[RMDB]
RNA sequence: GGGAACGACUCGAGUAGAGUCGAAAAGUGAACCACUUCGGUGGUUCACAUAGGAUCCUAAGUCGGACAAUGAUGCACACGCGACGAUCUAUCGGAAACGAUAGGGAGCGUGGUUGAGUCCGAUAUGGAGUACAUUGCUCAUAUUCGUAUGAGCAAACUAUUCUCUAGCAUUCGUGCUAGAGAAUAGAAAAGAAACAACAACAACAAC
Reactivity to DMS in 0.01 (KOAc 150mM, MgCl2 10mM, bicine 150mM(pH8.5), 24C), signal-to-noise 3, nucleotides 027 to 156: g020u000g000a010a000c010c000a000c000u000u010c300g080g030u000g030g010u010u000c000a000c030a030u000a050g010g010a130u000c000c000u010a080a250g020u000c010g010g000a030c000a140a080u010g010a140u000g000c120a150c000a020c020g020c000g020a100c190g010a040u000c020u000a020u000c010g020g020a190a140a270c000g010a010u000a010g010g010g010a060g020c010g040u000g000g010u000u000g000a140g010u000c010c010g010a020u000a100u010g000g010a060g000u000a120c090a170u000u010g000c000u000c000a010u000a070u000u020c300g040u000a010u000g000a020g000c000a000a010a060
Reactivity to 2A3 in 0.01 (KOAc 150mM, MgCl2 10mM, bicine 150mM(pH8.5), 24C), signal-to-noise 6, nucleotides 027 to 156: g010u010g000a000a000c000c000a000c000u060u080c300g100g000u000g000g010u000u010c000a000c010a000u010a000g050g040a090u030c010c010u050a120a020g020u000c010g000g000a010c030a090a280u180g040a080u150g060c060a040c000a040c300g040c010g080a290c010g010a120u000c000u000a000u000c010g060g030a130a040a040c000g000a000u000a000g010g000g000a010g000c000g000u000g000g010u010u050g010a010g010u010c000c020g000a000u000a020u050g010g000a020g050u070a050c060a210u060u060g000c010u010c010a000u030a050u080u090c260g080u050a000u010g000a000g000c000a000a020a000
An RNA of 207 nucleotides, treated with DMS and 2A3 and read out base by base. Conditions: 150 mM KOAc, 10 mM MgCl2 and 150 mM bicine (pH 8.5), 24 C. The DMS profile rests on 9,520 reads. Source: RMDB library RNAMAK, as collected in RNAgym.